[RMDB]
RNA sequence: GGGAACGACUCGAGUAGAGUCGAAAAGAUGAGCUCGAUUGUGUACACGGGUCCGAUUAAAGUUCAGCAAAUGAAAAACUUUAUCGAUAGCCUGGUAGCAUCACUAUCUGCUGCGGUGUCGAAUCUAUCAGUCAGUAGUCUUCGGACUACUGACUGAAAAAGAAACAACAACAACAAC
Reactivity to DMS in 0.01 (KOAc 150mM, MgCl2 10mM, bicine 150mM(pH8.5), 24C), signal-to-noise 1, nucleotides 027 to 126: g020a060u010g000a170g010c020u020c080g050a030u010u000g000u010g020u000a030c030a100c040g000g030g020u000c050c010g010a030u020u000a010a040a020g010u010u010c070a050g020c170a100a080a130u020g000a030a110a050a080a080c000u000u010u000a020u000c010g010a060u000a090g010c000c010u000g000g000u020a070g000c020a040u000c050a020c080u000a120u010c050u020g020c060u030g010c040g000g020u000g010u000c050g000a060a060u000c050u000a140